[RMDB]
RNA sequence: GGGAACGACUCGAGUAGAGUCGAAAACGUACGGCCAGCUUCAUCCAGGUCGUGACCACACCGGGGGCGAUCUCGAGGUCGACGGUAUCCUCGGUGAUGCCGACGACGGUGGCCUGUAGACCAGAAGCCGAGUGCGGGGUUUCGACCCCGCACUCGGAAAAGAAACAACAACAACAAC
Reactivity to 2A3 in 0.01 (KOAc 150mM, MgCl2 10mM, bicine 150mM(pH8.5), 24C), signal-to-noise 1, nucleotides 027 to 126: c100g150u200a010c060g000g020c010c000a050g050c030u040u090c000a080u050c030c000a010g010g000u000c030g010u000g170a130c000c000a150c000a110c130c110g090g000g000g000g000c000g060a080u060c060u000c000g040a020g020g020u000c000g000a000c030g000g050u100a000u020c000c010u010c090g200g050u300g000a000u000g000c000c000g000a000c000g000a010c000g000g000u000g000g000c000c020u060g000u000a010g060a000c010c000a000g000a210a000g010
About this RNA:
Chemical mapping of a 177-nucleotide RNA with 2A3. The RNA was probed in 150 mM KOAc, 10 mM MgCl2 and 150 mM bicine (pH 8.5) at 24 C.